[RMDB]
RNA sequence: GGGAACGACUCGAGUAGAGUCGAAAAAGAAGCAAGGUGUGUUUCACUUCACUUACAUUUAACUCAGGUCAAACAUGUGAAACAGACUCACAAUAGGAAAGGAUGAGAAAGAGACUAGGAGAAGGGGUGAGGGAUGAGGCAGUACUGAUGCCCCCUACCCUACUAGUGGUUUCGACCACUAGUAGGGAAAAGAAACAACAACAACAAC
Reactivity to 2A3 in 0.01 (KOAc 150mM, MgCl2 10mM, bicine 150mM(pH8.5), 24C), signal-to-noise 2, nucleotides 027 to 156: a030g110a040a000g050c030a000a040g050g000u070g000u000g020u130u010u000c060a040c020u120u030c090a030c100u190u230a040c050a250u090u150u190a150a070c090u070c130a010g110g000u050c090a120a130a060c100a130u080g010u020g020a000a010a000c000a000g030a030c000u030c020a080c050a070a170u180a110g030g000a010a040a000g030g000a070u080g020a000g020a060a090a000g070a020g020a020c020u060a080g000g040a040g020a080a000g050g020g000g010u040g050a030g000g000g010a010u080g000a040g030g000c010a000g070u040a030c070u100g010a040u110g020c000c000c000c020c000u060a100